[RMDB]
RNA sequence: GGGAACGACUCGAGUAGAGUCGAAAAGGCAACGCCACACGCUCGACUUUUGGGAUCAUGUGGUCGACAGCGCCGGUUCGAUCGUAGAUCGAUUGAUGUACAACGCAUUUCGUGCUGCUUACGAGCCGCCCGCGCUGAGGUUCGCCUCAGCGCGGGCAAAAGAAACAACAACAACAAC
Reactivity to 2A3 in 0.01 (KOAc 150mM, MgCl2 10mM, bicine 150mM(pH8.5), 24C), signal-to-noise 1, nucleotides 027 to 126: g030g060c080a000a030c020g000c000c000a010c020a020c030g010c000u010c010g030a140c080u130u020u240u300g000g000g050a140u080c000a060u070g040u010g000g000u080c030g000a040c000a060g010c000g010c090c010g000g000u010u000c000g080a090u000c050g080u000a010g010a040u000c000g050a100u100u200g000a020u040g000u040a090c010a110a070c290g000c000a000u000u010u060c020g160u150g140c000u000g000c000u010u070a060c050g020a000g000c000c000

About this RNA: The data come from the RNA Mapping Database (RMDB), library OK1LIB. Structure probing data (2A3) for a 177-nucleotide construct. Values cover nucleotides 27 to 126.